[RMDB]
The record gives the reactivity of an RNA of 177 nucleotides to 2A3. The reactions ran in a buffer of 150 mM KOAc, 10 mM MgCl2 and 150 mM bicine (pH 8.5), at 24 C.
RNA sequence: GGGAACGACUCGAGUAGAGUCGAAAAUGGCUGGCUGUGGCCAUGGGAUCUCCAGCUGUAGACCAGAGUAACUGGAGAACUUGGACAGCCCAGGUCAGCACAGUGCCUGCAGCUGCCACUUAGCUUUGGUUCCUUCACAUUUCGAUGUGAAGGAACCAAAAGAAACAACAACAACAAC
Reactivity to 2A3 in 0.01 (KOAc 150mM, MgCl2 10mM, bicine 150mM(pH8.5), 24C), signal-to-noise 2, nucleotides 027 to 126: u050g060g000c010u000g050g000c010u000g060u100g120g000c030c000a030u020g000g000g080a060u000c010u000c000c000a020g000c010u050g020u070a140g120a300c020c010a010g020a020g020u050a090a080c000u000g000g000a020g020a010a000c000u010u030g000g020a010c060a050g000c020c000c010a000g050g000u080c000a010g090c010a020c070a040g120u080g150c010c020u010g020c000a040g000c010u010g020c020c000a050c050u160u160a020g010c000u030u000u030
Source: RMDB libraries RFM100 and RFMREP, as collected in RNAgym.